Structure probing data (DMS and 2A3) for a 177-nucleotide construct. Values cover nucleotides 27 to 126. For DMS the reverse transcriptase was MarathonRT.

RNA sequence: GGGAACGACUCGAGUAGAGUCGAAAAUCUGAUCCCGCUUCGAUCCGUUGGAUAAUACGAUAAGACAAAUAAUUAGAGCGGUUCCAGUGACUCUGUUUUAACUGGAACUGCCUGGGCUACGGGCUCAUCAUAUUCAGAUGUUCGCAUCUGAAUAUGAAAAAGAAACAACAACAACAAC
Reactivity to DMS in 0.01 (KOAc 150mM, MgCl2 10mM, bicine 150mM(pH8.5), 24C), signal-to-noise 4, nucleotides 027 to 126: u010c080u010g010a100u000c010c000c010g020c160u010u000c080g020a070u020c040c040g020u000u010g010g010a120u000a080a130u020a140c070g010a070u000a080a120g020a100c120a060a110a090u000a060a080u010u000a040g000a150g020c010g000g010u000u000c010c000a010g010u000g010a070c110u010c150u010g000u010u000u010u000a130a030c010u010g000g000a010a000c000u000g010c000c010u000g010g000g000c030u000a070c150g000g000g010c060u000c030a100
Reactivity to 2A3 in 0.01 (KOAc 150mM, MgCl2 10mM, bicine 150mM(pH8.5), 24C), signal-to-noise 3, nucleotides 027 to 126: u010c030u080g050a090u020c000c010c010g000c040u040u090c040g040a020u010c020c050g100u090u140g080g040a080u050a180a030u160a200c040g020a020u040a140a070g080a060c060a020a140a090u240a130a090u120u110a060g020a030g070c020g010g000u000u000c000c000a010g010u000g020a030c010u060c070u300g190u140u120u040u120a060a010c000u000g000g000a000a000c000u010g020c010c000u020g000g000g000c010u010a030c120g070g100g000c000u000c020a030